Overview:
The record gives the reactivity of an RNA of 177 nucleotides to DMS and 2A3. For DMS, 4,055 sequencing reads were counted. Conditions: 150 mM KOAc, 10 mM MgCl2 and 150 mM bicine (pH 8.5), 24 C.
RNA sequence: GGGAACGACUCGAGUAGAGUCGAAAAUGUCGGUGGCCCAGACGCCGUACCCGGUGAGGGUCGCGUUGAUGAUAUACUGGGCGUGGUGAUGGACGAUCGACAGAACCUCCACCGUGGAUACCACGGUAUGGAGUCACAAGUUCGCUUGUGACUCCAUAAAAGAAACAACAACAACAAC
Reactivity to DMS in 0.01 (KOAc 150mM, MgCl2 10mM, bicine 150mM(pH8.5), 24C), signal-to-noise 2, nucleotides 027 to 126: u000g000u000c000g030g010u000g010g020c030c000c000a040g000a100c060g030c010c000g000u010a090c010c030c000g030g020u000g000a150g010g010g050u000c000g040c050g000u000u020g000a110u020g000a090u010a100u040a010c030u000g000g000g000c010g030u070g000g010u000g000a300u000g000g000a040c000g020a030u020c000g020a000c000a010g000a070a120c100c020u050c130c050a030c000c000g000u000g000g000a180u040a110c020c000a000c020g000g000u000
Reactivity to 2A3 in 0.01 (KOAc 150mM, MgCl2 10mM, bicine 150mM(pH8.5), 24C), signal-to-noise 6, nucleotides 027 to 126: u020g000u010c000g030g000u010g100g010c000c000c020a020g030a160c030g010c030c010g050u110a090c000c000c020g000g040u110g060a140g070g180g030u010c010g000c030g060u110u250g100a220u060g030a020u040a000u050a120c010u000g030g000g000c040g010u030g000g000u050g010a060u030g000g020a020c080g080a060u020c010g000a000c000a000g040a020a030c000c000u040c030c020a060c000c000g010u010g010g050a120u100a300c060c010a000c000g000g000u000